[RMDB]
RNA sequence: GGGAACGACUCGAGUAGAGUCGAAAAGAGGACCUGAGAAGCAGCUUGAAAUUCAGAUGCAUCAGAGAUACAUAUCAGGGGCUGAUAUGUUGAAAUCAUUGUCAGUUAUCUCAGUUUCCUGAUGCAAAUUUAGGUGAUCGUUCGCGAUCACCUAAAUAAAAGAAACAACAACAACAAC
Reactivity to 2A3 in 0.01 (KOAc 150mM, MgCl2 10mM, bicine 150mM(pH8.5), 24C), signal-to-noise 3, nucleotides 027 to 126: g090a040g070g060a080c010c020u090g020a060g010a090a010g010c090a000g060c070u090u070g120a110a100a040u160u090c040a010g040a180u040g010c000a000u010c010a010g050a000g010a030u020a030c040a000u100a050u150c050a040g000g000g040g000c030u000g000a000u000a000u000g060u040u100g080a070a080a010u210c050a060u040u130g030u040c000a010g000u020u090a190u080c020u010c040a010g000u010u050u020c000c000u000g000a000u000g040c020a000a120
Reactivity to DMS in 0.01 (KOAc 150mM, MgCl2 10mM, bicine 150mM(pH8.5), 24C), signal-to-noise 3, nucleotides 027 to 126: g000a070g010g010a100c060c020u000g000a060g010a110a130g000c100a060g020c090u070u000g000a090a090a080u000u020c050a040g010a120u000g010c030a000u000c010a000g000a150g010a030u010a020c040a090u040a180u010c100a040g010g040g010g000c000u000g020a010u000a030u010g000u020u000g010a100a140a060u030c020a030u010u030g000u000c010a040g020u000u010a100u020c030u000c070a120g000u000u010u000c050c010u000g010a020u000g000c050a060a130